[RMDB]
RNA sequence: GGGAACGACUCGAGUAGAGUCGAAAAGGUAGCCACUUCGGUGGCUACCAAAGAGAUACUACCUAUUGAGUUCCUGUGUAGGUACUCAUGACAGGAUGUCAAAAACAUGAUUCUUCGGAAUCAUGAACCAACGAGAAAACUUCGGUUUUCUCGUUGGAAAAGAAACAACAACAACAAC
Reactivity to 2A3 in 0.01 (KOAc 150mM, MgCl2 10mM, bicine 150mM(pH8.5), 24C), signal-to-noise 1, nucleotides 027 to 126: g030g000u000a000g000c000c010a040c010u060u120c260g120g030u000g050g020c000u010a000c000c000a000a010a000g000a010g030a040u060a050c060u050a130c010c000u030a070u050u050g010a010g010u000u050c000c000u060g080u110g100u300a030g000g000u010a020c010u030c000a030u040g040a060c050a040g090g080a070u100g010u070c050a050a000a050a100a050c000a000u000g000a010u010u000c010u010u040c200g010g030a000a000u030c000a000u010g010a000a010
Reactivity to DMS in 0.01 (KOAc 150mM, MgCl2 10mM, bicine 150mM(pH8.5), 24C), signal-to-noise 1, nucleotides 027 to 126: g000g010u000a000g000c000c000a010c000u000u010c160g060g010u000g000g000c000u000a000c000c000a010a070a090g000a080g000a100u000a060c140u010a160c010c010u000a080u010u000g030a100g000u000u000c000c000u000g030u010g010u010a010g000g000u000a010c020u000c030a060u000g010a050c260a120g010g000a110u000g020u000c040a020a010a060a130a150c000a000u000g000a020u000u000c010u000u010c250g050g000a000a000u000c000a000u010g000a060a070
The record gives the reactivity of an RNA of 177 nucleotides to 2A3 and DMS.
Conditions: 150 mM KOAc, 10 mM MgCl2 and 150 mM bicine (pH 8.5), 24 C.
The 2A3 profile rests on 908 reads.